RNA sequence: GGGAACGACUCGAGUAGAGUCGAAAAAUGAGGUCGUACAAUGUGUUGUCAAAUUUUGGGGGUAUAUGACGGUAUGUACGACCUAGAGUAUGUUAGUGAAAUACCCCCAAAAUACUGGCAUACUCAAGGUUGUCGGAGAUUUCGAUCUUCGACAACCAAAAGAAACAACAACAACAAC
Reactivity to 2A3 in 0.01 (KOAc 150mM, MgCl2 10mM, bicine 150mM(pH8.5), 24C), signal-to-noise 2, nucleotides 027 to 126: a000u290g020a030g000g000u000c000g000u000a010c050a050a180u230g130u100g050u160u100g040u050c020a060a100a140u060u070u040u040g050g010g000g000g020u030a070u010a020u180g000a010c010g110g000u200a070u120g010u000a000c010g010a000c020c000u000a000g000a010g000u000a000u000g000u010u020a010g000u030g090a090a050a050u010a030c000c000c000c000c000a000a010a010a010u020a000c000u000g010g000c000a000u000a010c000u000c010a020a010
Reactivity to DMS in 0.01 (KOAc 150mM, MgCl2 10mM, bicine 150mM(pH8.5), 24C), signal-to-noise 2, nucleotides 027 to 126: a090u050g000a020g000g010u000c000g020u000a000c030a050a060u040g060u030g000u020u010g000u000c040a090a090a150u010u010u050u020g010g010g000g000g020u000a000u010a050u010g000a020c040g020g070u000a070u000g020u000a000c000g020a000c000c010u000a000g010a000g000u000a000u000g010u000u000a000g020u010g000a070a020a090u000a080c010c000c000c000c000a030a000a040a040u030a030c020u000g000g020c000a000u000a000c000u000c000a200a080